Structure probing data (DMS and 2A3) for a 177-nucleotide construct. The 2A3 profile rests on 3,620 reads. The RNA was probed in 150 mM KOAc, 10 mM MgCl2 and 150 mM bicine (pH 8.5) at 24 C. The DMS profile rests on 5,775 reads.

RNA sequence: GGGAACGACUCGAGUAGAGUCGAAAACUAUCUACCUUCACAUAGUAAGCUUACUCAGUAUGUGAUAAGUGCAUUAUUAUUUAGAAUAGGAAUGAGGUAAAUAGGACAAUAAGGUCCAGGACCUGGGAGAAUGUUGAAAGUUCGCUUUCAACAUUCUAAAAGAAACAACAACAACAAC
Reactivity to DMS in 0.01 (KOAc 150mM, MgCl2 10mM, bicine 150mM(pH8.5), 24C), signal-to-noise 5, nucleotides 027 to 126: c020u000a010u000c030u000a030c010c010u000u000c080a060c120a040u000a020g010u000a070a170g010c090u000u000a040c100u000c030a100g010u010a060u010g000u010g000a060u010a030a040g030u000g010c140a070u010u000a040u000u000a070u000u000u000a120g000a100a120u000a060g010g010a080a100u010g010a040g000g020u000a010a020a020u000a010g000g000a070c120a040a080u010a090a050g010g000u000c020c110a110g000g000a060c030c010u000g010g020g000
Reactivity to 2A3 in 0.01 (KOAc 150mM, MgCl2 10mM, bicine 150mM(pH8.5), 24C), signal-to-noise 4, nucleotides 027 to 126: c000u010a030u050c010u030a040c020c000u060u070c020a040c010a100u060a010g050u070a050a060g010c010u050u050a050c020u020c070a070g120u160a220u220g100u040g030a070u040a030a000g030u030g040c010a030u020u020a030u080u050a090u060u180u140a130g050a160a100u070a090g060g040a080a110u120g010a030g010g000u000a010a010a050u050a020g010g020a010c010a000a070u180a150a020g020g000u000c010c000a010g110g010a010c010c020u010g010g050g010